[RMDB]
RNA sequence: GGGAACGACUCGAGUAGAGUCGAAAACCGUAGGUCGUCACCGUUUCAAUGAUGUGGGAGGAAGAAGCAUCAUUCGAAAGAGUGAUGUGUAAACUCCCAUUGAGAAACGCAAGUCGACCUAAACGGAAACGAAAGGGGCGUUCGCGCCCCUUUCGAACUUUUAAGCAUAGUUCGCUAUGCUUAAAAGAAAAGAAACAACAACAACAAC
Reactivity to 2A3 in 0.01 (KOAc 150mM, MgCl2 10mM, bicine 150mM(pH8.5), 24C), signal-to-noise 2, nucleotides 027 to 156: c000c000g020u000a010g030g010u000c000g010u000c020a040c080c030g010u000u000u010c220a300a300u050g020a010u030g000u000g020g030g000a010g030g000a030a300g000a010a000g120c000a010u010c000a000u010u000c010g030a080a030a020g010a000g010u000g000a000u000g050u040g000u000a000a000a000c000u000c000c000c000a000u000u000g000a000g000a000a000a000c000g000c040a160a300g010u010c000g000a000c000c000u000a000a010a010c000g010g060a070a040a010c000g000a000a020a010g000g000g000g000c020g020u080u120c210g030c000g020c040c000c020c170u000u000u000c000g000a000a010
Reactivity to DMS in 0.01 (KOAc 150mM, MgCl2 10mM, bicine 150mM(pH8.5), 24C), signal-to-noise 4, nucleotides 027 to 156: c000c010g040u000a040g020g040u000c000g040u000c010a120c120c000g020u010u020u000c030a060a220u010g010a020u000g020u000g000g010g030a020g000g010a020a150g010a150a300g010c010a010u000c000a010u000u000c020g030a170a100a150g000a060g050u000g030a000u000g010u000g000u000a010a170a300c040u000c000c000c000a000u000u000g000a060g000a010a020a010c010g020c020a020a170g010u000c000g020a020c010c000u000a000a030a050c030g000g010a140a070a160c040g030a000a020a070g000g000g050g000c000g000u000u000c300g030c000g000c000c000c000c000u010u000u010c000g000a030a080